[RMDB]
RNA sequence: GGGAACGACUCGAGUAGAGUCGAAAAGCGUACUACCUCAUUAUCAAUCUUCGAACUACGUCGAGCGUCCCAAAUAGGACGCGAUGAGACGCGAAGAUGACCACGAUGAGGUAUCGCAAAACUUAGUCUGACUCUGUUCGCAGAGUCAGACUAAGAAGAAAAGGAGGUGAUUCGUCACCUCCUUUUCAAAAGAAACAACAACAACAAC
Reactivity to 2A3 in 0.01 (KOAc 150mM, MgCl2 10mM, bicine 150mM(pH8.5), 24C), signal-to-noise 4, nucleotides 027 to 156: g000c010g070u120a110c030u000a000c000c010u000c010a020u000u030a070u130c090a150a190u000c020u000u010c010g090a140a160c110u140a120c260g010u010c030g040a060g050c000g000u010c000c010c000a050a010a080u110a030g000g010a000c000g050c040g130a190u200g110a060g000a010c010g000c000g030a000a000g000a000u000g000a010c060c080a130c210g000a000u010g000a010g000g000u010a010u070c000g000c010a120a050a010a000c000u000u010a010g000u000c010u000g000a000c000u000c000u010g040u100u180c270g010c080a010g000a000g000u020c000a000g000a000c000u000a000a000g000a000a000
Reactivity to DMS in 0.01 (KOAc 150mM, MgCl2 10mM, bicine 150mM(pH8.5), 24C), signal-to-noise 3, nucleotides 027 to 156: g030c020g000u000a050c080u000a020c010c000u000c020a020u000u010a090u010c030a090a050u000c000u000u000c000g020a090a300c020u000a060c010g010u010c000g020a120g050c000g020u000c000c000c010a040a110a190u010a040g020g010a010c010g040c020g010a040u020g020a200g010a020c170g010c010g020a040a050g010a030u000g000a130c140c140a040c070g040a030u010g010a040g040g000u000a010u000c000g000c010a080a030a100a140c000u000u000a010g000u000c000u000g000a020c000u000c000u000g030u000u000c300g040c040a010g000a020g010u010c000a000g000a010c000u000a000a000g010a090a110